[RMDB]
RNA sequence: GGGAACGACUCGAGUAGAGUCGAAAAAAAAGAUAUGGAUGAGGCUACCCACCAUAGGGUCUCGUUGAAAGUACUUCGGAAACGAAGUACUGGAGAGAUCCUAUGAGGCCUCAUCCUAAGUCAAAAACAAUAUCAGGUAGUUCGCUACCUGAUAUUGAAAAGAAACAACAACAACAAC
Reactivity to DMS in 0.01 (KOAc 150mM, MgCl2 10mM, bicine 150mM(pH8.5), 24C), signal-to-noise 4, nucleotides 027 to 126: a080a060a100a130g010a050u010a040u000g000g000a010u000g000a010g010g000c000u000a050c040c040c130a300c020c010a020u000a000g000g000g000u000c000u000c000g010u010u000g000a130a070a040g000u000a000c000u000u000c000g000g000a010a010a050c000g010a010a000g010u000a000c000u000g000g000a020g010a020g000a010u000c000c000u010a010u000g000a080g010g000c000c000u000c000a000u010c000c000u000a010a040g000u020c040a060a090a090a140a200
Reactivity to 2A3 in 0.01 (KOAc 150mM, MgCl2 10mM, bicine 150mM(pH8.5), 24C), signal-to-noise 1, nucleotides 027 to 126: a010a000a000a080g050a010u050a020u060g000g000a000u010g000a000g010g000c010u020a100c100c130c110a040c010c000a030u000a000g040g000g020u000c000u000c020g050u120u030g000a010a000a000g010u000a000c000u020u000c010g010g000a020a000a010c010g000a000a010g000u000a010c010u000g000g000a020g010a000g000a000u000c000c010u000a000u010g000a000g000g000c000c000u000c000a000u000c000c000u000a000a000g010u000c010a010a000a010a080a140
This 177-nucleotide RNA was probed chemically with DMS and 2A3. Reactivities are given for positions 27 through 126. The data come from the RNA Mapping Database (RMDB), library TTRDES. Conditions: 150 mM KOAc, 10 mM MgCl2 and 150 mM bicine (pH 8.5), 24 C.